[RMDB]
RNA sequence: GGGAACGACUCGAGUAGAGUCGAAAAGACAUUCAUGGCAACCGUAAUUCAUCCUCGCCCUCUGAUGAACUUGCUGGGCAGGAAGCAUCAGUAUGAGUAACAGGCAGAUCUUAAUGUUGCUCUUGACGUCUUUAUCGGUGUUCGCACCGAUAAAGACAAAAGAAACAACAACAACAAC
Reactivity to DMS in 0.01 (KOAc 150mM, MgCl2 10mM, bicine 150mM(pH8.5), 24C), signal-to-noise 1, nucleotides 027 to 126: g070a080c120a090u000u000c060a090u000g070g000c020a030a040c050c060g070u000a100a070u000u040c080a070u020c000c020u050c130g000c020c020c000u000c000u000g040a070u000g000a090a140c090u010u000g000c000u030g000g010g030c020a060g020g000a080a010g000c090a020u040c010a000g030u030a120u020g040a050g000u020a020a100c010a020g020g000c130a070g040a090u000c150u010u010a230a080u000g010u000u000g020c020u030c000u000u010g000a150c240
Reactivity to 2A3 in 0.01 (KOAc 150mM, MgCl2 10mM, bicine 150mM(pH8.5), 24C), signal-to-noise 3, nucleotides 027 to 126: g080a020c030a020u040u050c030a020u050g020g030c010a030a040c040c020g030u090a030a090u100u130c030a030u030c060c020u030c070g030c000c000c000u050c020u030g080a050u060g000a000a060c040u060u070g010c020u070g040g070g040c010a020g010g110a050a020g010c000a050u080c000a000g080u060a160u170g030a050g060u030a040a070c010a000g040g000c000a000g030a130u050c050u070u090a080a070u100g000u010u010g000c010u020c020u020u010g040a040c060
Source information
Structure probing data (DMS and 2A3) for a 177-nucleotide construct. For 2A3 the reverse transcriptase was SuperScript II with manganese. Reactivities are given for positions 27 through 126.